[RMDB]
RNA sequence: GGGAACGACUCGAGUAGAGUCGAAAAAAGUCUUGGGCGACCUUGUCCCGGCCCUCGCGCAUCGCCUGCGUGUGCCAGCCAGGCCCGUACUCGCCGCCGCCGCGGAUGUUGGCCAACGCAUAGGUGCGCUCACAGCGGAGUUCGCUCCGCUGUGAGCAAAAGAAACAACAACAACAAC
Reactivity to DMS in 0.01 (KOAc 150mM, MgCl2 10mM, bicine 150mM(pH8.5), 24C), signal-to-noise 1, nucleotides 027 to 126: a070a010g000u040c020u000u010g000g000g030c060g000a060c070c220u010u000g000u030c040c020c020g050g040c050c010c030u050c120g020c010g000c020a040u030c030g000c260c090u000g000c040g000u000g010u000g000c030c010a080g000c090c150a010g000g010c000c090c010g000u040a040c020u000c080g020c030c030g000c040c090g020c010c010g020c030g030g010a090u000g040u000u000g000g060c000c020a060a050c050g040c010a070u010a180g010g000u000g000c110
Reactivity to 2A3 in 0.01 (KOAc 150mM, MgCl2 10mM, bicine 150mM(pH8.5), 24C), signal-to-noise 2, nucleotides 027 to 126: a000a000g070u030c030u060u070g010g000g030c040g050a090c040c040u060u040g050u060c010c010c000g040g000c000c000c000u020c030g030c000g050c020a040u050c030g050c050c000u010g030c030g000u050g020u090g040c000c000a000g010c000c030a070g060g000c010c010c010g020u100a030c020u050c050g000c000c000g020c030c000g010c000c000g040c050g020g000a080u090g030u040u060g070g000c050c000a080a000c020g000c030a020u020a070g070g000u020g000c020

Structure probing data (DMS and 2A3) for a 177-nucleotide construct. The DMS profile rests on 1,627 reads. Reactivities are given for positions 27 through 126.